[RMDB]
RNA sequence: GGGAACGACUCGAGUAGAGUCGAAAACGUCUUAAAUUAAAUUUCCCUUGCUGAGCUCAUCUCAGCAAACAAUAACAAAUAACAAAUAACAACAGCAGGGAAGGUUGUUCUUAUUUGUUACAAUUAACUGAUAACGAUGUUUCGACAUCGUUAUCAGAAAAGAAACAACAACAACAAC
Reactivity to DMS in 0.01 (KOAc 150mM, MgCl2 10mM, bicine 150mM(pH8.5), 24C), signal-to-noise 2, nucleotides 027 to 126: c250g010u000c180u030u000a050a070a130u000u000a010a090a110u000u010u000c000c010c010u000u000g010c020u000g000a030g000c290u020c300a090u020c010u000c000a000g000c000a020a010a020c190a090a080u000a080a090c120a050a050a170u000a000a020c010a040a000a030u020a010a000c080a020a000c000a020g000c010a110g000g030g010a160a080g010g000u010u000g010u000u000c200u000u000a000u000u010u000g010u000u000a020c150a090a070u000u050a050a240
Reactivity to 2A3 in 0.01 (KOAc 150mM, MgCl2 10mM, bicine 150mM(pH8.5), 24C), signal-to-noise 5, nucleotides 027 to 126: c030g060u040c100u150u230a160a180a160u120u130a070a070a130u060u170u040c010c000c000u000u020g000c000u010g010a000g000c080u080c160a160u110c120u000c000a000g020c010a010a010a000c010a010a050u210a050a020c080a080a120a010u050a020a010c010a020a030a010u020a000a010c000a000a000c010a000g030c010a030g170g030g140a080a020g100g000u010u000g000u000u000c000u000u010a020u010u010u010g010u000u000a010c020a010a170u160u110a090a060